Structure probing data (2A3 and DMS) for a 207-nucleotide construct. The RNA was probed in 150 mM KOAc, 10 mM MgCl2 and 150 mM bicine (pH 8.5) at 24 C. It was measured as part of the RMDB library OK3TST.

[RMDB]
RNA sequence: GGGAACGACUCGAGUAGAGUCGAAAACUUGCCGGAAACGAUAUCAUCAGACCGGAUCGACGACGAAUUCGCCGCCCCGGGCAUGCUUGAGGUGGUUCAGCGCAUAGACCUGGCCGGUCAUUUCGAGUUCAUCGCGAUAGACCGGGUCGUGCCAGCCCAUUUAGCAUUGGUUCGCCAAUGCUAAAUGAAAAGAAACAACAACAACAAC
Reactivity to 2A3 in 0.01 (KOAc 150mM, MgCl2 10mM, bicine 150mM(pH8.5), 24C), signal-to-noise 6, nucleotides 027 to 156: c040u060u130g040c020c000g030g020a100a150a050c060g060a070u070a090u190c140a050u030c010a040g120a150c030c000g030g020a040u030c030g180a260c010g000a010c030g030a050a070u090u020c030g010c020c000g020c010c050c000c000g010g010g030c040a030u030g000c000u040u050g040a060g040g090u220g050g040u180u050c040a020g030c020g000c130a020u030a050g040a110c010c010u020g050g000c020c020g000g020u040c030a090u020u100u080c010g000a000g020u080u110c050a040u030c100g010c000g030a020u010a050g040a010c000c000g010g000g020u020c010g010u010g030c010c020a050g040c020c000
Reactivity to DMS in 0.01 (KOAc 150mM, MgCl2 10mM, bicine 150mM(pH8.5), 24C), signal-to-noise 3, nucleotides 027 to 156: c060u010u000g020c010c030g020g010a120a120a160c050g030a090u000a080u000c080a100u000c060a110g010a120c000c020g020g010a070u000c020g020a070c020g020a020c020g010a100a180u000u000c010g040c070c000g000c040c020c010c020g000g040g000c020a120u000g040c040u000u020g020a080g010g030u000g030g020u000u000c020a090g010c110g010c040a060u000a060g030a110c020c010u000g030g080c030c000g000g020u000c030a130u000u000u010c050g030a080g000u000u010c080a110u000c010g020c060g010a070u000a080g020a030c020c010g010g010g020u000c010g030u000g020c030c020a300g040c100c080

For DMS the reverse transcriptase was MarathonRT.